Chemical mapping of a 207-nucleotide RNA with 2A3.

RNA sequence: GGGAACGACUCGAGUAGAGUCGAAAACAGGUAAGUACACAAUUCUCUAAGCGAUGAGAAGCGUGUGGAAAAUUAGGGAAGGGCUACGGCUAUAAGCCUAAGAAAGCUUAUCUACAAGCGGAGGUAUAAAAGCUCGCAGCGUUCGCGCUGCGAGCAAGGUAAUACAAAACUUCGGUUUUGUAUUACCAAAAGAAACAACAACAACAAC
Reactivity to 2A3 in 0.01 (KOAc 150mM, MgCl2 10mM, bicine 150mM(pH8.5), 24C), signal-to-noise 2, nucleotides 027 to 156: c010a020g050g040u040a010a030g090u120a040c000a000c000a000a050u060u010c010u000c010u070a190a150g160c050g150a100u130g010a020g000a060a000g040c090g050u040g010u090g020g010a090a110a080a030u110u050a030g020g020g010a020a000g020g000g030c010u020a040c060g030g000c020u020a030u000a300a000g020c000c020u010a040a020g060a060a030a000g030c010u010u010a010u060c040u060a070c010a020a020g060c040g050g060a040g010g060u090a050u060a130a150a050a010g000c020u020c040g000c000a000g000c000g020u150u130c200g000c000g000c090u010g030c040g000a010g000c000a000a000
2A3 adducts were read by reverse transcription with SuperScript II with manganese. The RNA was probed in 150 mM KOAc, 10 mM MgCl2 and 150 mM bicine (pH 8.5) at 24 C.